The record gives the reactivity of an RNA of 207 nucleotides to 2A3 and DMS. The data come from the RNA Mapping Database (RMDB), library RNAMAK. The 2A3 profile rests on 5,181 reads. Values cover nucleotides 27 to 156.
RNA sequence: GGGAACGACUCGAGUAGAGUCGAAAAAUUGGUGUCGCUGGGCAUCUAACGGUCUUACAGCAAGGCUUCCUGAAGCGCGCACGGGAAGCUGAUGACCUGUUGGACCGAGGAUGCCUGUGCUGAAGCGCGCACGGCAACCGAAAGGUGCGAGGGGUGGGAUCUAUUAUUCCUUCGGGAAUAAUAGAUCAAAAGAAACAACAACAACAAC
Reactivity to 2A3 in 0.01 (KOAc 150mM, MgCl2 10mM, bicine 150mM(pH8.5), 24C), signal-to-noise 3, nucleotides 027 to 156: a000u080u090g040g000u070g020u030c020g000c040u040g020g000g000c020a010u040c100u210a300a100c020g010g000u000c000u010u010a000c010a000g010c020a040a070g010g000c000u000u010c000c010u030g050a100a070g020c000g000c000g000c010a020c020g010g000g010a010a000g000c000u000g020a090u020g010a000c010c000u000g000u000u050g010g000a000c010c000g000a000g000g010a000u010g000c000c000u010g010u000g000c010u020g010a120a050g000c000g000c000g000c010a010c010g000g010c010a020a020c020c000g050a060a040a030g040g000u010g010c050g020a040g020g010g000g060u220g040g060
Reactivity to DMS in 0.01 (KOAc 150mM, MgCl2 10mM, bicine 150mM(pH8.5), 24C), signal-to-noise 2, nucleotides 027 to 156: a120u000u000g010g020u000g000u000c020g040c030u010g040g000g010c000a000u000c000u000a070a220c060g080g010u000c000u010u000a040c010a050g000c040a050a060g040g010c000u000u000c000c000u000g010a040a040g020c020g020c000g000c020a300c040g000g020g070a030a010g050c000u000g000a030u020g000a060c300c010u020g020u000u000g030g000a040c020c040g020a300g000g000a030u000g040c000c010u000g010u000g060c010u000g010a090a090g000c010g010c030g060c020a300c020g000g000c020a080a070c030c030g000a080a090a130g060g040u000g010c050g000a120g000g030g000g040u020g010g000